[RMDB]
The record gives the reactivity of an RNA of 177 nucleotides to DMS and 2A3. For 2A3 the reverse transcriptase was SuperScript II with manganese.
RNA sequence: GGGAACGACUCGAGUAGAGUCGAAAAAGAACCUGUUGCAAUGGCGGCCGACAAUUUAGCAUUGGCAAUUGCAGAAAUUGGUUCACUGUCUGAACGUCGUAUUUCGAUGAUGAUGGACCGUCAUAUACUGGAGCUCAUAUUUCGAUAUGAGCUCCAGAAAAGAAACAACAACAACAAC
Reactivity to DMS in 0.01 (KOAc 150mM, MgCl2 10mM, bicine 150mM(pH8.5), 24C), signal-to-noise 2, nucleotides 027 to 126: a060g010a090a080c000c010u000g000u000u000g000c080a080a050u010g000g020c110g000g000c040c000g000a080c060a080a070u010u020u010a130g000c120a080u020u010g020g000c080a120a030u000u000g040c100a110g000a120a050a070u000u010g040g020u000u010c010a120c110u000g000u000c020u000g000a050a060c120g000u000c100g030u000a190u000u000u010c030g000a040u000g010a070u010g010a090u000g000g020a060c000c000g000u000c070a020u000a070u000a090
Reactivity to 2A3 in 0.01 (KOAc 150mM, MgCl2 10mM, bicine 150mM(pH8.5), 24C), signal-to-noise 1, nucleotides 027 to 126: a000g040a040a030c020c000u040g030u080u050g000c000a010a010u030g020g130c110g080g000c040c000g070a030c060a080a020u160u250u220a120g010c050a030u030u010g000g030c040a000a000u020u000g000c020a000g140a050a050a020u110u080g000g060u010u020c000a010c040u080g070u000c000u110g030a130a090c010g040u010c030g000u060a300u060u270u150c030g030a020u030g060a160u030g000a000u070g000g060a030c030c000g050u080c030a020u210a020u040a220
DMS adducts were read by reverse transcription with MarathonRT. The DMS profile rests on 1,262 reads. The reactions ran in a buffer of 150 mM KOAc, 10 mM MgCl2 and 150 mM bicine (pH 8.5), at 24 C.